[RMDB]
RNA sequence: GGGAACGACUCGAGUAGAGUCGAAAAGAUUCAGAAUCCAUGGCUGGAAGAGGUAGUAAGGCCAUUGGGAGGGCAUGCCUCUCCUCAGCCCACCCCCACCCUGUGUGGGUCUCCAUUCUGAAAUUUCCAUUCAGGUAUACCGCGGUUCGCCGCGGAAGAUAAACUUAGAUUUCGAUCUAAGUUUAUCAAAAGAAACAACAACAACAAC
Reactivity to 2A3 in 0.01 (KOAc 150mM, MgCl2 10mM, bicine 150mM(pH8.5), 24C), signal-to-noise 6, nucleotides 027 to 156: g030a010u020u020c000a010g010a030a010u030c080c050a130u220g000g000c000u010g000g010a030a020g000a020g040g000u020a020g050u080a110a130g100g010c030c030a060u100u150g120g080g030a180g080g000g000c020a000u030g010c000c000u000c000u010c010c020u090c020a010g000c000c010c000a030c010c030c010c010c000a000c020c040c060u120g060u060g000u010g100g010g040u020c040u010c020c010a020u020u000c010u010g010a030a030a040u020u030u000c010c010a020u090u120c050a020g050g040u090a060u080a120c020c000g020c010g000g030u030u060c180g020c070c000g010c020g000g000a010a000
Reactivity to DMS in 0.01 (KOAc 150mM, MgCl2 10mM, bicine 150mM(pH8.5), 24C), signal-to-noise 1, nucleotides 027 to 156: g000a220u000u020c000a060g030a040a040u000c020c070a110u010g030g000c020u000g020g000a030a020g000a040g000g020u000a080g000u000a110a090g050g010c000c000a140u010u000g000g030g010a170g000g020g060c020a250u000g010c020c000u000c000u020c020c010u010c050a030g000c000c010c070a130c120c080c010c020c020a120c070c040c070u010g000u020g050u010g010g010g000u000c030u000c040c040a070u000u000c030u000g010a020a030a130u000u000u000c000c010a250u000u000c000a090g000g030u000a110u030a120c000c030g040c000g030g000u000u000c260g030c020c000g020c020g030g020a010a040
Structure probing data (2A3 and DMS) for a 207-nucleotide construct. For DMS, 3,697 sequencing reads were counted. Reactivities are given for positions 27 through 156.